[RMDB]
RNA sequence: GGGAACGACUCGAGUAGAGUCGAAAAAACUGGGGUCACACGGUUCAAAUUUAAAUUACGUGAAUCGCUCUGGUCCGGCCUGUCGGUUGGCUAAGUCCAGGGUUAAAACCAAAUAGAUCGACUACGCAUGUAGAACUGGUUGCGGAGGGCUUGCGGACAUAUCACACUACUUCGGUAGUGUGAUAUGAAAAGAAACAACAACAACAAC
Reactivity to DMS in 0.01 (KOAc 150mM, MgCl2 10mM, bicine 150mM(pH8.5), 24C), signal-to-noise 2, nucleotides 027 to 156: a050a080c000u000g000g010g010g020u010c040a070c050a040c020g020g000u010u010c030a060a060a140u000u000u000a120a110a160u020u000a080c080g000u010g010a020a060u000c070g030c030u010c030u000g020g010u010c000c120g030g010c000c040u000g020u010c030g030g010u000u000g010g020c020u000a030a120g020u000c010c010a030g000g040g000u000u000a020a030a060a110c040c030a030a060a110u010a090g010a060u000c030g020a070c030u000a080c050g030c050a060u010g000u000a090g000a070a050c040u000g000g000u000u000g030c050g000g020a100g000g010g030c020u000u000g010c040g060g030a150
Reactivity to 2A3 in 0.01 (KOAc 150mM, MgCl2 10mM, bicine 150mM(pH8.5), 24C), signal-to-noise 1, nucleotides 027 to 156: a000a000c040u070g010g000g030g030u070c030a030c010a000c050g000g010u070u020c050a060a130a120u160u230u300a130a200a120u200u150a050c090g020u030g070a030a020u020c040g010c000u000c000u010g030g000u020c000c060g000g000c000c010u020g010u040c020g000g070u020u020g020g000c000u040a100a010g000u010c010c010a000g000g020g000u020u070a040a030a060a070c030c030a030a010a010u030a000g030a020u030c020g000a010c000u070a010c060g020c040a040u120g030u120a030g020a130a050c050u070g000g050u060u050g000c020g010g010a010g020g000g020c000u020u030g010c010g030g000a000

The record gives the reactivity of an RNA of 207 nucleotides to DMS and 2A3. Conditions: 150 mM KOAc, 10 mM MgCl2 and 150 mM bicine (pH 8.5), 24 C. Source: RMDB library RSTRND, as collected in RNAgym.